RNA sequence: GGGAACGACUCGAGUAGAGUCGAAAAGAGUGCUGGCCAUCCUUUUAAUAAGUUUGGCAAAGCUCGUGUCUAUUAUGAGAGCAUGUCUUACCAGGAGCAAGAUGAACUUUUUGCCAUGACAAAGCGUGAAGGAGUAAGAGUUCGCUCUUACUCCUUCAAAAGAAACAACAACAACAAC
Reactivity to 2A3 in 0.01 (KOAc 150mM, MgCl2 10mM, bicine 150mM(pH8.5), 24C), signal-to-noise 2, nucleotides 027 to 126: g010a000g000u030g010c030u030g020g020c000c000a010u040c000c020u030u030u030u070a200a110u230a060a020g000u000u000u000g000g000c000a080a140a020g000c010u000c000g030u040g040u000c060u020a130u160u020a090u250g110a020g000a000g070c000a040u030g090u140c020u010u070a130c030c000a010g020g050a060g020c020a030a010g030a080u060g020a040a070c080u000u010u020u020u030g000c000c040a000u040g010a040c070a010a070a010g080c060g050u080
Reactivity to DMS in 0.01 (KOAc 150mM, MgCl2 10mM, bicine 150mM(pH8.5), 24C), signal-to-noise 3, nucleotides 027 to 126: g020a080g000u000g000c110u000g010g020c000c000a030u000c030c010u010u000u000u010a090a190u010a030a030g010u010u000u000g000g040c000a050a070a130g000c010u000c020g020u010g010u000c060u000a100u010u010a070u020g010a070g000a070g010c030a070u010g010u000c010u000u000a180c050c030a120g020g010a110g030c030a040a030g000a040u000g000a060a040c060u010u000u000u000u000g010c010c020a100u000g010a050c090a060a090a110g010c150g020u010
Overview:
This 177-nucleotide RNA was probed chemically with 2A3 and DMS. The data come from the RNA Mapping Database (RMDB), library 15KREP.